[RMDB]
RNA sequence: GGGAACGACUCGAGUAGAGUCGAAAACUGAUAGGAUUGCUCCUGUAUAUAAAGGACGUGGGGAUUUAAUUCUGUGGCUGAAGAUCUGCAGAGAGGUGUGAGGCCUGGUCAGACAUUUGUCUCAUUUCUCUGGGCUGUCACCAACUAGUGUGUUCCCCUCAUGGGAUUGUUUCGACAAUCCCAUGAGAAAAGAAACAACAACAACAAC
Reactivity to 2A3 in 0.01 (KOAc 150mM, MgCl2 10mM, bicine 150mM(pH8.5), 24C), signal-to-noise 2, nucleotides 027 to 156: c030u040g010a080u060a080g000g050a070u020u130g030c010u000c000c000u030g050u040a190u010a040u030a080a240a040g090g000a020c110g000u030g000g070g030g050a040u040u210u120a040a130u130u030c010u020g030u030g000g080c040u040g020a020a020g030a110u010c000u040g030c050a000g010a020g020a080g110g000u090g040u050g060a040g000g000c000c010u000g020g000u040c050a000g010a030c020a040u110u190u250g010u010c010u020c020a050u020u230u000c060u020c030u060g010g000g020c000u060g020u150c000a000c030c000a030a030c030u040a030g030u010g010u000g010u120u000c000c000c000
Reactivity to DMS in 0.01 (KOAc 150mM, MgCl2 10mM, bicine 150mM(pH8.5), 24C), signal-to-noise 2, nucleotides 027 to 156: c020u020g020a100u000a060g000g000a080u010u010g010c080u010c010c020u000g050u000a100u010a200u000a100a070a190g000g010a070c130g040u000g030g040g010g000a140u000u010u010a070a120u000u000c040u000g050u000g000g020c010u000g000a130a150g000a110u020c020u010g030c050a100g000a080g000a120g030g020u010g010u000g000a300g010g030c000c030u020g000g020u000c030a080g020a070c010a280u000u000u010g020u000c030u000c070a090u000u000u000c070u010c050u000g020g030g010c010u010g000u000c000a000c020c020a090a080c060u000a090g020u010g020u000g000u010u010c010c040c020